[RMDB]
RNA sequence: GGGAACGACUCGAGUAGAGUCGAAAAUGAAUGUACUACUAACUUUGGCUAUGAGACACUCCAUAGAACCAUGACAACUCAUUGAAAAGCAGUAUCUGGCAUUUCAACCAAACCCCCUUAGAGUGACCAACAACGGAUCGUUCGCGAUCCGUUGUUGAAAAGAAACAACAACAACAAC
Reactivity to DMS in 0.01 (KOAc 150mM, MgCl2 10mM, bicine 150mM(pH8.5), 24C), signal-to-noise 1, nucleotides 027 to 126: u000g000a020a050u000g020u000a030c170u000a040c090u000a100a080c170u000u000u000g030g000c010u000a040u000g020a170g020a180c040a040c060u010c040c020a050u000a090g000a110a150c060c030a030u020g010a180c210a130a090c160u000c130a050u000u010g000a050a080a110a000g010c020a050g020u000a050u000c120u010g010g010c040a050u000u000u000c100a010a210c090c050a060a060a300c070c030c000c050c050u000u030a020g010a060g040u000g030a230c200
The record gives the reactivity of an RNA of 177 nucleotides to DMS. Reactivities are given for positions 27 through 126.